[RMDB]
RNA sequence: GGGAACGACUCGAGUAGAGUCGAAAAGGGAUUGUAAACUCCCCUCCGAUACUUGCGUUAUAAAACGUCACCCCUGAGGGGCCUAUAAGAUCGGCAGAGUUAAUAUAUGCAUUAGAAAUAGUGACCCUCGGACUGAUAUUUUCGAAUAUCAGUCCGAAAAAGAAACAACAACAACAAC
Reactivity to DMS in 0.01 (KOAc 150mM, MgCl2 10mM, bicine 150mM(pH8.5), 24C), signal-to-noise 1, nucleotides 027 to 126: g020g000g010a060u000u020g030u020a040a080a160c210u000c000c000c000c020u000c020c040g000a070u010a110c150u020u000g030c020g030u000u000a070u010a060a090a090a030c000g020u010c100a250c050c020c020c050u000g040a060g000g010g000g040c080c040u000a050u020a010a090g010a130u010c050g000g000c300a030g000a100g010u000u010a080a050u010a080u000a080u000g010c010a010u010u050a100g020a050a090a070u010a010g020u000g000a140c000c050c010
Reactivity to 2A3 in 0.01 (KOAc 150mM, MgCl2 10mM, bicine 150mM(pH8.5), 24C), signal-to-noise 1, nucleotides 027 to 126: g040g000g010a020u100u200g160u300a030a190a130c000u000c000c000c000c020u000c080c030g030a050u080a200c070u060u030g000c000g040u000u060a260u120a300a300a090a000c000g070u020c090a060c000c000c000c000u020g000a210g000g000g000g010c020c020u100a110u030a070a070g030a070u090c050g010g000c000a000g070a000g060u040u130a220a000u130a070u030a000u150g020c030a050u000u190a050g050a050a100a020u040a000g040u090g050a070c000c030c000